RNA sequence: GGGAACGACUCGAGUAGAGUCGAAAACUUAUUAGUAACUAAUCCAAAGCAAGUAUAGGAGAACAGGUUUUUAACUAUCUUUAGGCAGAUAAAAAAUAGUAUUUGACAGUCUAACACUAACUGAACACCACGCUCUCUUACUUCGGUAAGAGAGCAACAGAUCGAACUUGUUCGCAAGUUCGAUCUGAAAAGAAACAACAACAACAAC
Reactivity to 2A3 in 0.01 (KOAc 150mM, MgCl2 10mM, bicine 150mM(pH8.5), 24C), signal-to-noise 2, nucleotides 027 to 156: c010u100u100a050u190u080a230g050u070a090a070c060u020a110a100u090c100c030a090a040a000g000c020a040a060g000u080a030u130a220g000g030a080g000a070a040c050a060g020g060u020u080u060u040u140a040a080c030u010a030u080c000u040u100u040a010g000g050c010a010g030a170u200a170a040a000a010a020a060u100a000g040u030a140u010u010u110g080a050c050a000g020u030c020u090a130a000c040a010c050u130a200a040c060u030g090a100a020c060a010c060c000a020c050g000c000u000c000u010c000u010u000a000c000u020u060c090g000g000u000a000a000g000a000g010a000g010c000a000a000